[RMDB]
RNA sequence: GGGAACGACUCGAGUAGAGUCGAAAAACUGCUGGCGUACGCGCCAGCAGAACGACGGGACAUUAUUACUUUUGGUACGCGCUGUGACACUUCAAACUCGUACCGUGAGUAAUAAUGCGCCGUCCAAUAGCCACGUAUCUUUCGAGAUACGUGGCUAAAAAGAAACAACAACAACAAC
Reactivity to 2A3 in 0.01 (KOAc 150mM, MgCl2 10mM, bicine 150mM(pH8.5), 24C), signal-to-noise 2, nucleotides 027 to 126: a000c010u030g000c030u020g000g000c000g030u060a090c300g030c000g000c070c000a000g000c000a000g000a080a030c070g000a000c010g000g010g050a050c000a000u000u000a000u000u020a020c020u000u000u130u250g000g000u000a000c000g010c000g000c110u070g030u080g110a090c110a120c210u210u140c050a110a110a050c000u000c010g000u000a000c000c000g000u010g000a000g000u000a000a000u000a000a000u000g000c050g060c020c000g000u000c040c010a090a070
About this RNA
This 177-nucleotide RNA was probed chemically with 2A3. The reactions ran in a buffer of 150 mM KOAc, 10 mM MgCl2 and 150 mM bicine (pH 8.5), at 24 C. For 2A3, 984 sequencing reads were counted.